[RMDB]
RNA sequence: GGGAACGACUCGAGUAGAGUCGAAAAGAUAUGGAGGUAAAACUGCGGUCGUAGACAUGCAUCUCACAUCGGAAACGAUGUACGUGAGAUGCAACAGCUACAGACCGCAGUUUUACCUCCUAAGUCAGAUAUAAGUUCACUUCGGUGAACUUAUAUCAAAAGAAACAACAACAACAAC
Reactivity to DMS in 0.01 (KOAc 150mM, MgCl2 10mM, bicine 150mM(pH8.5), 24C), signal-to-noise 3, nucleotides 027 to 126: g000a070u010a300u000g010g010a030g000g040u000a000a010a040a020c000u000g000c000g040g030u000c000g010u000a010g000a060c080a300u010g010c000a000u000c000u000c000a020c020a040u000c000g000g010a120a110a260c020g000a010u040g020u000a060c300g030u020g010a000g020a010u000g020c020a010a020c270a150g000c000u000a010c000a150g000a000c000c010g010c000a000g000u000u000u000u000a010c000c010u000c000c000u000a010a070g020u000c060a150
Notes
Structure probing data (DMS) for a 177-nucleotide construct. It was measured as part of the RMDB library TTRINS. The RNA was probed in 150 mM KOAc, 10 mM MgCl2 and 150 mM bicine (pH 8.5) at 24 C. Reactivities are rounded to 0.1 and cut off at 0 and 3.